This 177-nucleotide RNA was probed chemically with DMS and 2A3.
[RMDB]
RNA sequence: GGGAACGACUCGAGUAGAGUCGAAAAGAUAUGGACCGCAGUAAGACAGCUCGUCGGAAACGACAGAGCAAUGACGCUGACGGUCCUAAGUCGAAGCUACGAGUGGACUUCGGUCCACUCGUAGCAACUGCGGUAAGAUGUUCGCAUCUUACCGCAGAAAAGAAACAACAACAACAAC
Reactivity to DMS in 0.01 (KOAc 150mM, MgCl2 10mM, bicine 150mM(pH8.5), 24C), signal-to-noise 1, nucleotides 027 to 126: g000a030u000a120u020g000g010a000c020c000g000c000a020g000u000a100a180g040a130c120a300g000c000u000c010g000u010c000g000g010a030a020a060c000g010a010c000a140g050a020g010c000a040a010u000g010a110c290g000c000u000g000a120c000g000g000u000c000c000u000a000a030g020u000c000g000a160a080g000c000u000a000c000g020a000g030u000g000g000a030c000u000u020c120g010g000u000c000c000a000c000u000c000g010u010a000g000c000a000a000
Reactivity to 2A3 in 0.01 (KOAc 150mM, MgCl2 10mM, bicine 150mM(pH8.5), 24C), signal-to-noise 1, nucleotides 027 to 126: g020a000u010a000u040g010g010a000c010c050g040c010a010g010u180a300a150g160a280c030a030g040c010u010c000g000u000c000g000g000a040a030a000c010g000a030c190a130g010a000g000c010a040a090u100g060a030c020g000c000u050g060a270c000g010g030u000c000c000u000a000a000g000u000c010g020a080a010g030c010u000a000c010g000a010g000u020g000g020a000c030u200u150c300g030g000u060c010c010a000c010u000c000g000u010a000g000c020a000a000